The record gives the reactivity of an RNA of 207 nucleotides to 2A3 and DMS. Values are in units of 0.01, from 0 to 300, in steps of 10. The reactions ran in a buffer of 150 mM KOAc, 10 mM MgCl2 and 150 mM bicine (pH 8.5), at 24 C. For DMS the reverse transcriptase was MarathonRT. Source: RMDB library OK3TST, as collected in RNAgym.

RNA sequence: GGGAACGACUCGAGUAGAGUCGAAAACUUACGCACCUCAAGGGAAGGGAAUUUGUUGCUUUGCGCUGGGCUCGAUGAAGGGGAAUGAAUGCUGGUUCAGCCAUCAGCCCCGCACCCACACUACUGGGAGGGCAGAGGGACAUUCUCCUUCUUAGAGAUGGACUAUGAAGUUCGCUUCAUAGUCCAUAAAAGAAACAACAACAACAAC
Reactivity to 2A3 in 0.01 (KOAc 150mM, MgCl2 10mM, bicine 150mM(pH8.5), 24C), signal-to-noise 3, nucleotides 027 to 156: c030u100u120a040c070g030c030a060c000c030u030c060a050a120g080g000g030a030a030g010g000g090a090a090u090u030u120g040u020u030g030c040u040u080u050g000c050g020c040u030g000g050g000c040u030c040g050a060u090g030a020a010g000g010g010g040a010a010u020g070a130a030u100g000c020u030g030g120u110u170c040a040g050c030c020a050u020c000a030g030c000c000c010c030g000c000a040c010c010c010a020c010a010c100u300a100c070u080g030g030g000a110g050g120g000c020a030g150a130g030g030g000a010c000a000u000u000c020u000c010c000u010u000c020u000u060a000g000a000g000
Reactivity to DMS in 0.01 (KOAc 150mM, MgCl2 10mM, bicine 150mM(pH8.5), 24C), signal-to-noise 1, nucleotides 027 to 156: c050u000u000a090c110g000c070a200c050c010u030c000a120a120g030g030g030a120a050g000g030g020a120a160u010u000u000g000u000u000g010c080u010u010u000g020c030g000c060u010g000g000g030c020u000c000g000a100u000g010a080a040g030g050g000g010a070a070u000g000a100a100u010g020c000u000g000g020u000u000c040a130g000c120c070a010u000c060a060g040c000c000c000c130g000c110a100c020c000c010a100c070a090c160u000a170c190u000g000g020g030a090g000g000g040c010a040g010a050g000g020g010a180c030a090u040u000c030u000c000c010u000u000c000u000u000a100g000a030g000